[RMDB]
RNA sequence: GGGAACGACUCGAGUAGAGUCGAAAAGAUAUGGACGGACCAUACCCUCACAGCGAAGAACUCGGAAACGAGGGAGCUGCCCAUGGAUUCCGUCCUAAGUCGGACGCGGGAAGUUCGCUUCCCGCAAGAACUGUAAUUACUUCGGUAAUUACAGUUCAAAAGAAACAACAACAACAAC
Reactivity to DMS in 0.01 (KOAc 150mM, MgCl2 10mM, bicine 150mM(pH8.5), 24C), signal-to-noise 5, nucleotides 027 to 126: g000a030u000a300u010g000g010a030c010g000g010a090c050c010a020u010a140c090c080c030u000c150a250c030a010g000c010g010a090a150g010a150a190c000u000c010g000g010a090a050a160c020g010a020g000g000g000a050g010c020u000g000c110c140c090a040u000g000g010a190u000u000c000c000g010u000c000c000u010a010a080g010u000c030g000g010a120c210g000c010g010g000g000a020a020g010u000u010c190g010c010u000u000c000c000c010g000c000a010a020
Reactivity to 2A3 in 0.01 (KOAc 150mM, MgCl2 10mM, bicine 150mM(pH8.5), 24C), signal-to-noise 4, nucleotides 027 to 126: g020a020u050a040u130g000g000a000c010g000g000a010c000c020a040u100a220c100c050c000u160c040a110c030a010g010c020g230a300a050g020a200a080c010u000c020g010g020a070a050a030c020g000a010g020g010g020a040g000c040u060g050c060c080c030a030u020g020g000a150u250u070c010c010g000u000c000c000u010a060a010g040u010c040g040g020a050c170g000c000g000g000g010a000a000g020u040u090c180g090c080u010u000c010c000c000g000c000a000a010
An RNA of 177 nucleotides, treated with DMS and 2A3 and read out base by base. For DMS the reverse transcriptase was MarathonRT.